[RMDB]
RNA sequence: GGGAACGACUCGAGUAGAGUCGAAAAGAUAUGGAUUAUGUACCUCGCGUUGAAAGAAAUCGGAAACGAUUUCUGGAGCGGCGUACCGCUAAUCCUAAGUCAAAACUUCUAGGUUCGCCUAGAAGAACAUUACUUGUCCGUUCGCGGACAAGUAAUGAAAAGAAACAACAACAACAAC
Reactivity to 2A3 in 0.01 (KOAc 150mM, MgCl2 10mM, bicine 150mM(pH8.5), 24C), signal-to-noise 1, nucleotides 027 to 126: g050a000u090a030u140g010g000a010u000u030a070u300g000u020a000c000c040u030c040g000c030g220u300u050g070a030a020a000g020a000a020a000u020c020g060g000a110a060a030c000g000a000u000u010u010c010u000g020g000a030g020c010g040g000c070g000u000a010c000c000g000c020u020a000a010u000c000c000u000a200a000g080u000c040a000a000a110a210c000u000u000c010u000a000g000g070u000u090c300g040c060c000u000a000g000a010a000g000a000a000
Reactivity to DMS in 0.01 (KOAc 150mM, MgCl2 10mM, bicine 150mM(pH8.5), 24C), signal-to-noise 3, nucleotides 027 to 126: g000a030u000a300u000g000g000a000u000u010a010u000g000u000a000c000c030u000c020g030c010g000u000u040g020a260a110a020g000a010a020a010u000c000g010g010a120a170a270c010g020a000u000u000u000c010u000g000g000a020g020c010g020g010c300g010u000a010c000c050g000c020u000a000a010u010c000c000u000a060a140g010u010c010a090a120a150a130c010u000u000c000u000a000g020g030u010u000c240g020c010c000u010a010g010a010a010g020a190a190